[RMDB]
RNA sequence: GGGAACGACUCGAGUAGAGUCGAAAAGUCAACCCACAUUAAGUGGCCAGAUUCGUAAACUGGAAGAUGAACUGGGCGUGAUGUUGUUAGAGCGCACCAGUCGUAAGGUGCUGUUUACACAGGCAGGCGACAGGAAGACAUUCGUGUCUUCCUGUCGAAAAGAAACAACAACAACAAC
Reactivity to 2A3 in 0.01 (KOAc 150mM, MgCl2 10mM, bicine 150mM(pH8.5), 24C), signal-to-noise 1, nucleotides 027 to 126: g070u040c100a110a040c060c060c020a020c000a010u210u250a170a070g110u140g090g000c020c000a030g030a070u200u160c070g150u200a000a050a090c000u030g050g070a080a010g110a070u210g070a180a030c040u000g030g040g050c020g010u020g030a060u150g020u210u050g070u090u120a070g010a020g100c020g000c110a230c040c000a000g000u000c010g070u070a020a020g160g000u110g000c020u000g020u000u080u060a070c050a050c000a030g060g000c020a030g070g100
Reactivity to DMS in 0.01 (KOAc 150mM, MgCl2 10mM, bicine 150mM(pH8.5), 24C), signal-to-noise 2, nucleotides 027 to 126: g010u000c170a150a080c240c000c000a100c050a080u020u000a090a150g050u000g000g020c040c020a110g000a120u020u000c230g000u000a050a120a070c040u020g010g000a120a100g010a050u010g000a120a010c020u000g000g000g000c040g030u000g000a210u010g020u050u030g000u000u000a030g010a300g000c000g000c000a040c040c010a010g010u000c030g000u000a070a070g010g000u010g010c000u000g040u000u010u010a100c160a110c070a040g000g020c030a080g030g010
An RNA of 177 nucleotides, treated with 2A3 and DMS and read out base by base. The RNA was probed in 150 mM KOAc, 10 mM MgCl2 and 150 mM bicine (pH 8.5) at 24 C. For DMS the reverse transcriptase was MarathonRT.